[RMDB]
Record summary
Structure probing data (2A3) for a 177-nucleotide construct.
RNA sequence: GGGAACGACUCGAGUAGAGUCGAAAAUAAAACCAUCGAGCUCUAAUGAGUUCGAUGGAGCAUGAAUGUCUCCUGAGUAUGACAUCAUGGAAAUCAGGAGGUGUCGAGGAAAACUCGACGCCAAAAACACGGAUCCGUCAUUCGUGACGGAUCCGUGAAAAGAAACAACAACAACAAC
Reactivity to 2A3 in 0.01 (KOAc 150mM, MgCl2 10mM, bicine 150mM(pH8.5), 24C), signal-to-noise 2, nucleotides 027 to 126: u130a050a080a000a030c010c000a000u000c010g010a000g000c000u000c000u100a200a240u300g000a000g040u000u000c000g000a000u000g000g000a000g080c000a000u010g030a070a040u000g030u000c000u000c000c070u150g060a070g080u300a150u120g090a000c000a000u000c000a000u000g130g000a000a130a000u080c060a060g000g210a170g020g030u030g000u000c030g000a000g030g000a130a280a000a190c020u000c000g000a000c000g000c000c000a170a090a000a010a000
2A3 adducts were read by reverse transcription with SuperScript II with manganese.